An RNA of 177 nucleotides, treated with 2A3 and DMS and read out base by base. Conditions: 150 mM KOAc, 10 mM MgCl2 and 150 mM bicine (pH 8.5), 24 C. 2A3 adducts were read by reverse transcription with SuperScript II with manganese.
[RMDB]
RNA sequence: GGGAACGACUCGAGUAGAGUCGAAAAGAUUGUGCUGAGUGAGAAGGAGUACUGUGUCGUGCAGAAUCCCCUCGGCGCGGACGGACUGAACGAAUUUGGACGAAAAGAAGUACGUAAAGGGGAGUGCGCAGCACGACCUAUUCGUAGGUCGUGCUGCAAAAGAAACAACAACAACAAC
Reactivity to 2A3 in 0.01 (KOAc 150mM, MgCl2 10mM, bicine 150mM(pH8.5), 24C), signal-to-noise 9, nucleotides 027 to 126: g060a060u080u130g030u030g030c030u030g010a050g050u140g070a100g070a170a070g050g040a020g020u110a100c020u020g010u020g130u250c110g050u140g020c010a010g030a100a090u030c010c000c000c010u010c020g030g000c030g000c010g010g020a020c020g010g010a010c020u060g030a090a030c040g050a120a090u100u090u110g060g030a030c030g060a020a070a010a080g110a070a030g020u080a040c040g030u090a090a040a050g020g010g000g000a030g030u040g030c050
Reactivity to DMS in 0.01 (KOAc 150mM, MgCl2 10mM, bicine 150mM(pH8.5), 24C), signal-to-noise 8, nucleotides 027 to 126: g000a090u010u010g010u010g010c020u010g000a090g010u000g000a130g010a110a090g020g000a090g000u030a080c040u010g010u010g010u010c140g010u020g000c020a060g000a130a140u010c010c010c020c020u000c030g010g010c030g020c040g000g010a080c070g010g010a080c040u020g000a060a090c120g030a070a080u010u030u010g000g010a050c060g000a060a050a080a060g010a100a070g000u010a050c050g010u010a050a090a080g010g000g000g000a050g020u010g000c130